[RMDB]
RNA sequence: GGGAACGACUCGAGUAGAGUCGAAAAGCCUUUACGUUCGCGUAAAGGCAAAGGAGGCUCGAGUCUGAGUGUGCGUAACGAGCCUCCACGCACACACAGACAAAACCCUGCUGUUCGCAGCAGGGAAGAGUAUAAAAGAGUUCGCUCUUUUAUACUCAAAAGAAACAACAACAACAAC
Reactivity to 2A3 in 0.01 (KOAc 150mM, MgCl2 10mM, bicine 150mM(pH8.5), 24C), signal-to-noise 3, nucleotides 027 to 126: g010c000c000u000u000u000a010c010g010u010u060c240g020c000g100u010a000a010a000g000g010c000a000a000a040g020g010a040g020g060c010u020c080g060a040g030u000c010u000g000a070g010u030g000u020g000c010g020u060a260a200c200g030a120g150c000c040u020c010c010a000c000g000c000a000c000a000c000a000c000a000g020a010c020a020a090a020a050c000c000c000u000g020c000u010g020u040u050c250g010c120a000g000c000a000g000g020g000a000a010
Reactivity to DMS in 0.01 (KOAc 150mM, MgCl2 10mM, bicine 150mM(pH8.5), 24C), signal-to-noise 5, nucleotides 027 to 126: g000c000c000u000u000u000a000c010g010u000u000c200g030c010g020u000a000a010a010g000g010c000a010a020a080g010g010a130g000g000c020u000c050g010a150g010u000c000u000g010a070g020u000g010u000g000c010g010u000a070a100c140g000a070g010c020c020u000c050c080a010c000g010c000a010c010a010c010a120c010a020g000a030c030a120a080a090a130c000c000c000u000g010c000u000g000u000u010c190g010c020a010g010c000a010g000g000g010a010a010
Source: RMDB library M2PK50, as collected in RNAgym. An RNA of 177 nucleotides, treated with 2A3 and DMS and read out base by base. The RNA was probed in 150 mM KOAc, 10 mM MgCl2 and 150 mM bicine (pH 8.5) at 24 C. High DMS reactivity at an A or C suggests that its Watson-Crick edge is free. For 2A3 the reverse transcriptase was SuperScript II with manganese. Reactivities are rounded to 0.1 and cut off at 0 and 3. DMS adducts were read by reverse transcription with MarathonRT.